[RMDB]
RNA sequence: GGGAACGACUCGAGUAGAGUCGAAAAGAUGACAUCAUACUUUCUGUGCAAGAGACGGAUCUCUGGGUCCUUGACACAUUCACUAAAUCAUUUGGGGAGCUUGGCCUGAAUUAUGAUUUCAGUGAAAACAGGUGAGAAGGUUCGCCUUCUCACCUGUAAAAGAAACAACAACAACAAC
Reactivity to 2A3 in 0.01 (KOAc 150mM, MgCl2 10mM, bicine 150mM(pH8.5), 24C), signal-to-noise 4, nucleotides 027 to 126: g120a060u190g070a040c070a090u180c050a080u200a190c070u050u120u070c060u080g000u000g040c020a020a020g100a000g020a050c030g020g090a100u020c060u050c030u190g070g050g050u020c000c000u010u080g060a030c010a000c000a050u030u000c000a000c030u030a000a000a000u020c020a040u060u000u020g040g020g010g010a130g120c130u130u130g180g090c020c010u060g010a110a050u200u030a050u150g020a000u000u070u040c070a000g020u000g000a040a000a000
Reactivity to DMS in 0.01 (KOAc 150mM, MgCl2 10mM, bicine 150mM(pH8.5), 24C), signal-to-noise 1, nucleotides 027 to 126: g010a020u000g000a230c240a280u000c000a000u080a090c100u030u000u000c030u010g000u000g000c010a030a080g000a080g000a020c060g000g000a070u010c030u060c020u010g010g000g000u000c030c030u040u000g000a140c080a050c040a070u000u000c000a020c000u000a000a000a010u000c000a040u000u020u000g050g000g000g010a200g000c020u040u030g000g000c050c000u000g000a060a060u020u000a000u020g000a000u000u000u010c170a000g000u000g000a040a040a090

An RNA of 177 nucleotides, treated with 2A3 and DMS and read out base by base. For 2A3, 1,817 sequencing reads were counted. DMS adducts were read by reverse transcription with MarathonRT. For DMS, 1,907 sequencing reads were counted. The RNA was probed in 150 mM KOAc, 10 mM MgCl2 and 150 mM bicine (pH 8.5) at 24 C.